Structure probing data (DMS) for a 177-nucleotide construct. For DMS the reverse transcriptase was MarathonRT. It was measured as part of the RMDB library OK2TST. The RNA was probed in 150 mM KOAc, 10 mM MgCl2 and 150 mM bicine (pH 8.5) at 24 C.
[RMDB]
RNA sequence: GGGAACGACUCGAGUAGAGUCGAAAAGAUGACCUCCCUCAACCCUUUCCUGCGGAUCUCCACGCAGAUGAUCGAGACGAUCCGGCUCCACCAGGGGCUCGAGGCGAAGGCGGCCCGUGAGAAGGCCAUCCUGGUCACACUUCGGUGUGACCAGGAUAAAAGAAACAACAACAACAAC
Reactivity to DMS in 0.01 (KOAc 150mM, MgCl2 10mM, bicine 150mM(pH8.5), 24C), signal-to-noise 1, nucleotides 027 to 126: g000a060u000g000a200c080c030u000c010c060c010u020c020a160a280c060c000c020u000u000u000c030c000u010g020c030g000g000a090u000c060u000c030c150a200c060g000c030a030g000a190u000g010a030u000c030g040a180g030a130c110g070a050u000c010c030g040g000c000u000c040c000a060c280c300a190g030g030g000g010c000u030c090g030a040g090g000c250g000a140a030g000g070c120g010g000c040c000c010g000u000g020a150g030a100a090g000g010c030c050